[RMDB]
RNA sequence: GGGAACGACUCGAGUAGAGUCGAAAACGUCCCGUCAUUUAAGGGAGCCUGGCGACCUAAACGGUCGUGUCAUAUGUAGGCACCAGGUGCCAUCUCCCUGUGGCAAUCCGCAGGCUCGGUGGGUCGGUCAUCGCAUCCGCUUCGGUGGGUGCGAUGAAAAAGAAACAACAACAACAAC
Reactivity to 2A3 in 0.01 (KOAc 150mM, MgCl2 10mM, bicine 150mM(pH8.5), 24C), signal-to-noise 2, nucleotides 027 to 126: c030g070u020c000c000c010g030u070c030a130u060u170u230a090a040g060g020g000a010g000c000c010u000g010g000c010g010a020c000c010u050a100a070a030c090g000g000u010c000g000u000g010u000c000a020u100a070u290g200u210a140g020g000c010a010c010c020a030g060g000u040g010c000c000a060u020c030u010c000c000c010u020g000u000g000g000c010a020a060u020c010c010g010c010a000g020g000c010u010c030g000g000u020g010g010g000u030c000g010g010
Reactivity to DMS in 0.01 (KOAc 150mM, MgCl2 10mM, bicine 150mM(pH8.5), 24C), signal-to-noise 9, nucleotides 027 to 126: c160g000u000c000c000c000g020u020c080a060u020u030u040a070a050g000g010g000a020g010c110c050u000g000g000c010g000a010c010c000u010a060a100a110c230g000g010u010c040g020u010g000u000c020a130u040a100u030g020u020a100g000g010c020a040c010c080a100g000g010u010g000c010c000a040u010c030u000c030c010c010u010g010u010g000g000c020a080a080u010c050c030g000c030a040g000g010c010u000c000g000g020u000g000g000g010u010c020g000g000